[RMDB]
RNA sequence: GGGAACGACUCGAGUAGAGUCGAAAACAUCAUCCCUUCGGGGAUGAUGAAACAUCGAAAGAUCAGGCUUACCGUAAUAAGCCAAAAUACGAGCGAAACGCAAAAGACCUGUGUUCGCACAGGUCAACAUACGUCGGAUGUUCGCAUCCGACGUAUGAAAAGAAACAACAACAACAAC
Reactivity to DMS in 0.01 (KOAc 150mM, MgCl2 10mM, bicine 150mM(pH8.5), 24C), signal-to-noise 2, nucleotides 027 to 126: c000a000u000c020a000u000c010c000c000u000u000c230g050g030g000g000a010u000g020a000u010g020a110a090a100c190a040u010c040g000a020a080a140g010a070u000c110a140g010g000c000u000u000a030c150c140g010u010a120a140u000a020a010g020c010c000a030a080a080a080u000a060c130g000a060g000c060g020a050a080a070c090g000c120a050a080a120a070g000a000c000c010u000g040u000g000u000u000c180g040c000a010c000a000g000g010u000c000a040a060
Reactivity to 2A3 in 0.01 (KOAc 150mM, MgCl2 10mM, bicine 150mM(pH8.5), 24C), signal-to-noise 2, nucleotides 027 to 126: c000a000u000c000a010u000c010c000c000u000u040c220g060g000g000g000a000u000g000a000u010g000a000a020a000c050a040u120c060g040a020a110a070g070a050u120c080a060g010g030c000u010u010a040c070c050g090u070a080a080u040a070a040g000c000c000a020a020a020a060u120a030c050g000a040g030c030g090a230a080a030c100g000c100a020a020a070a050g000a000c000c000u000g000u000g040u050u060c200g000c040a000c000a000g010g000u010c000a000a000

The record gives the reactivity of an RNA of 177 nucleotides to DMS and 2A3.
Conditions: 150 mM KOAc, 10 mM MgCl2 and 150 mM bicine (pH 8.5), 24 C.